RNA sequence: GGGAACGACUCGAGUAGAGUCGAAAAGCAAACGACGAGUUCUUUGACGCUCGUCUUCGUGCUUAAUCGUAGCUAAACCCUACGAGCUUCCCAGUCCGUCCGGCUCGUCUGCUGGCUGGUUUUUCGGACUGUCAUCGUAAGCGGACUCGCCACGUUCGGACCAGAUUAUCUUCGGAUAAUCUGGUCCAAAAGAAACAACAACAACAAC
Reactivity to 2A3 in 0.01 (KOAc 150mM, MgCl2 10mM, bicine 150mM(pH8.5), 24C), signal-to-noise 1, nucleotides 027 to 156: g000c000a020a010a040c120g010a000c010g000a040g020u120u190c090u200u180u270g060a090c090g000c050u000c000g000u020c000u000u020c050g020u030g000c000u000u020a040a020u030c000g030u000a000g000c000u030a070a110a060c000c050c000u000a000c000g010a000g050c030u010u000c000c040c000a000g020u000c030c010g000u000c000c000g020g000c010u000c010g050u000c030u000g000c000u000g000g020c010u000g040g000u050u080u000u080u140c000g000g000a000c030u010g130u030c090a150u100c050g210u120a040a020g000c000g010g000a010c010u010c040g110c000c070a150c070g160u090u070c070

Chemical mapping of a 207-nucleotide RNA with 2A3. The 2A3 profile rests on 745 reads. Values are in units of 0.01, from 0 to 300, in steps of 10. The RNA was probed in 150 mM KOAc, 10 mM MgCl2 and 150 mM bicine (pH 8.5) at 24 C. Source: RMDB library ARCHII, as collected in RNAgym.